[RMDB]
RNA sequence: GGGAACGACUCGAGUAGAGUCGAAAAGCACAAGACUUUGAACAUUAUAGCAGUUAGUAGUUGCCUAAACCCAUUGCAAUAUAUGGGACAGUAGAGGUCGCAAGCCUAUACUGUGCGGUGAACAUUCAAAAGGGAUGGUACUUCGGUACCAUCCCAAGCCGUUAAAGAAGUUCGCUUCUUUAACGGCAAAAGAAACAACAACAACAAC
Reactivity to DMS in 0.01 (KOAc 150mM, MgCl2 10mM, bicine 150mM(pH8.5), 24C), signal-to-noise 2, nucleotides 027 to 156: g050c030a100c030a090a090g000a110c040u000u010u000g020a140a100c060a150u000u000a060u020a110g000c010a040g000u010u000a120g040u000a070g020u000u000g000c020c070u000a060a110a180c000c010c000a010u000u000g000c080a130a190u000a080u000a010u010g010g020g020a090c000a030g010u020a030g000a030g070g030u010c070g010c300a090a300g000c030c020u020a040u000a020c020u000g010u000g000c090g000g000u000g000a050a070c090a050u010u010c060a030a060a170a160g000g030g030a020u000g020g020u000a010c000u000u010c300g020g020u000a000c000c000a000u000c000c000c000a000a010
Reactivity to 2A3 in 0.01 (KOAc 150mM, MgCl2 10mM, bicine 150mM(pH8.5), 24C), signal-to-noise 1, nucleotides 027 to 156: g030c010a070c060a000a060g070a050c040u070u020u020g090a100a000c030a040u130u100a110u140a160g050c040a010g010u060u110a040g040u080a040g020u010u010g000c010c030u080a100a070a070c000c000c000a000u000u030g000c010a030a030u020a000u010a000u210g010g000g010a000c010a000g000u000a000g000a000g030g000u070c070g020c110a000a090g010c000c000u010a010u000a000c000u000g010u060g060c020g020g010u000g080a050a020c020a060u120u300c120a170a170a050a000g000g000g000a000u000g000g000u010a000c030u000u000c080g040g000u000a000c010c010a000u000c000c000c000a000a010